[RMDB]
Structure probing data (2A3) for a 207-nucleotide construct. Values cover nucleotides 27 to 156. For 2A3, 968 sequencing reads were counted.
RNA sequence: GGGAACGACUCGAGUAGAGUCGAAAAUCUGCCUUUCGAGGCAGACUAGGGGGGUCCUCUAAGACAGGACAUGCCAUUUACACUGAAGCCUCCACGGUGUUUUUGGCAACAGCUCGAGAGGACGGAGGCACCCGUCGUCGGUUGCUUCGGCAACCAACACGAUGGUCUGAUUCGUCAGACCAUCGUGAAAAGAAACAACAACAACAAC
Reactivity to 2A3 in 0.01 (KOAc 150mM, MgCl2 10mM, bicine 150mM(pH8.5), 24C), signal-to-noise 1, nucleotides 027 to 156: u020c000u010g000c010c010u060u210u140c300g130a070g000g000c000a000g010a000c060u260a190g000g000g000g000g020g000u000c050c000u040c020u030a180a000g030a080c060a080g100g000a110c120a260u260g000c010c000a000u010u000u000a010c010a000c000u020g010a010a000g010c040c010u030c000c000a000c000g000g000u010g000u010u000u000u000u010g040g000c040a150a180c030a250g000c030u010c000g020a000g000a000g000g030a000c030g010g010a000g000g020c000a000c000c000c000g190u200c060g080u030c150g000g000u020u010g000c000u020u070c210g150g000c010a000a000c000c030a000a010
The RNA was probed in 150 mM KOAc, 10 mM MgCl2 and 150 mM bicine (pH 8.5) at 24 C.